[RMDB]
RNA sequence: GGGAACGACUCGAGUAGAGUCGAAAAGCUUCUUCUUGUUCUCGAGGGCCUUCCUUCUGCGGUGAUCCUCCCUCUCCUUGUCGGUGAACCCGCUCUUGUGAGGCCUCUUCCCAGGUCCGGAGUCGACGAAGCAGAGCCUUCGGGCUCUGCAAAAGAAACAACAACAACAAC
Reactivity to 2A3 in 0.01 (KOAc 150mM, MgCl2 10mM, bicine 150mM(pH8.5), 24C), signal-to-noise 2, nucleotides 027 to 129: g010c030u030u010c020u060u010c010u070u210g100u120u060c020u020c000g010a070g000g010g000c000c000u040u010c020c000u020u080c040u060g060c020g010g030u050g000a130u030c050c000u000c010c020c000u030c000u000c020c020u090u140g090u070c040g000g030u060g040a060a070c000c030c000g000c010u020c020u010u050g040u000g020a080g070g000c000c000u010c000u010u000c000c000c000a030g000g000u000c010c000g010g000a010g000u050c010g030a070c040g030a030a000
Reactivity to DMS in 0.01 (KOAc 150mM, MgCl2 10mM, bicine 150mM(pH8.5), 24C), signal-to-noise 3, nucleotides 027 to 129: g040c070u090u020c020u030u050c020u010u040g020u050u000c050u030c000g020a120g000g000g000c110c000u000u110c090c020u000u000c010u050g030c060g040g040u010g100a020u020c020c000u020c090c040c080u020c080u040c130c030u040u000g020u040c090g020g060u040g020a100a200c070c000c040g040c060u010c030u010u030g040u030g020a200g000g010c050c020u030c140u040u000c010c010c010a060g000g000u040c020c010g040g000a020g000u020c040g070a030c090g010a050a060
The record gives the reactivity of an RNA of 170 nucleotides to 2A3 and DMS. 2A3 adducts were read by reverse transcription with SuperScript II with manganese. For DMS the reverse transcriptase was MarathonRT. The data come from the RNA Mapping Database (RMDB), library 15KLIB. The reactions ran in a buffer of 150 mM KOAc, 10 mM MgCl2 and 150 mM bicine (pH 8.5), at 24 C.